[RMDB]
RNA sequence: GGGAACGACUCGAGUAGAGUCGAAAAUGACAGAUUUCGCAUCCAUGCAUGCAAAUGGCAGUUCUACCAACUUAACUACAUUAAUGCAGCAACCCAAUAUGGGCAACUUGAUGAAACGUCCGAACUCGGUAUUGAGUCUGAAUGAGUUGGUGACACACAUCAUAAGACUUUUCGAAGUCUUAUGAUGAAAAGAAACAACAACAACAAC
Reactivity to DMS in 0.01 (KOAc 150mM, MgCl2 10mM, bicine 150mM(pH8.5), 24C), signal-to-noise 5, nucleotides 027 to 156: u010g000a110c020a070g010a130u000u000u000c070g020c030a080u010c020c100a160u000g030c040a060u000g010c040a050a060a100u010g000g030c060a060g010u000u000c050u000a090c020c020a040a030c040u010u000a090a140c020u000a070c020a060u010u010a040a080u000g010c010a080g010c010a090a100c030c000c010a090a190u000a080u000g010g020g030c020a030a050c050u000u000g010a150u000g020a090a060a080c040g010u000c020c020g010a050a030c010u000c020g020g030u000a090u000u000g010a040g020u000c020u010g010a040a050u000g010a060g010u000u000g000g010u010g010a140c100a090c110a130
Reactivity to 2A3 in 0.01 (KOAc 150mM, MgCl2 10mM, bicine 150mM(pH8.5), 24C), signal-to-noise 9, nucleotides 027 to 156: u130g020a030c030a030g160a120u050u090u110c080g020c020a030u020c050c020a060u110g030c030a040u020g010c010a040a040a090u040g050g000c050a020g030u070u000c030u060a090c020c020a040a030c030u110u100a050a050c030u060a020c040a080u050u110a140a060u110g020c020a020g010c020a050a160c010c010c000a050a090u200a140u270g010g000g010c030a070a050c040u050u060g010a030u050g030a090a090a040c040g030u000c020c020g030a090a070c030u020c040g040g030u090a110u070u140g010a010g010u010c040u070g120a120a080u080g010a020g030u020u020g020g020u020g040a000c030a000c010a000